Description
Structure probing data (2A3 and DMS) for a 177-nucleotide construct. Conditions: 150 mM KOAc, 10 mM MgCl2 and 150 mM bicine (pH 8.5), 24 C. The DMS profile rests on 4,326 reads. Source: RMDB library 15KREP, as collected in RNAgym. Values cover nucleotides 27 to 126.
[RMDB]
RNA sequence: GGGAACGACUCGAGUAGAGUCGAAAACUUAUUUGUGACUAUGGCCUUCGUUAUGUUGUUGGUUAAACACAAACACACCUUUUUGACACUUUUCUUGUUGCCUGUGGCUAUUUGUUUGACUUAUGCACAUUUAAACAUGCUUCGGCAUGUUUAAAUGAAAAGAAACAACAACAACAAC
Reactivity to 2A3 in 0.01 (KOAc 150mM, MgCl2 10mM, bicine 150mM(pH8.5), 24C), signal-to-noise 2, nucleotides 027 to 126: c020u070u060a030u120u100u060g040u030g020a020c030u070a060u120g030g000c010c010u050u030c050g070u090u130a120u230g170u150u040g020u010u000g010g020u020u050a050a090a010c030a010c000a030a010a010c070a000c010a050c040c050u020u080u000u060u070g020a010c010a010c020u110u040u020u050c020u040u150g030u010u060g030c010c000u060g000u010g030g010c010u020a040u050u090u020g050u000u030u040g030a030c010u070u090a040u170g000c050a020
Reactivity to DMS in 0.01 (KOAc 150mM, MgCl2 10mM, bicine 150mM(pH8.5), 24C), signal-to-noise 4, nucleotides 027 to 126: c040u000u010a070u000u000u010g010u000g010a070c120u010a080u000g010g000c000c010u010u000c050g010u010u020a110u020g020u010u010g010u000u010g010g020u010u010a060a100a120c050a030c040a030a040a060c130a070c120a080c090c040u010u000u000u000u010g000a070c050a090c050u000u000u010u000c030u000u000g010u000u000g010c020c020u000g030u000g020g010c050u000a080u000u000u010g000u000u010u000g020a110c090u000u000a080u000g020c120a140
For 2A3, 1,645 sequencing reads were counted.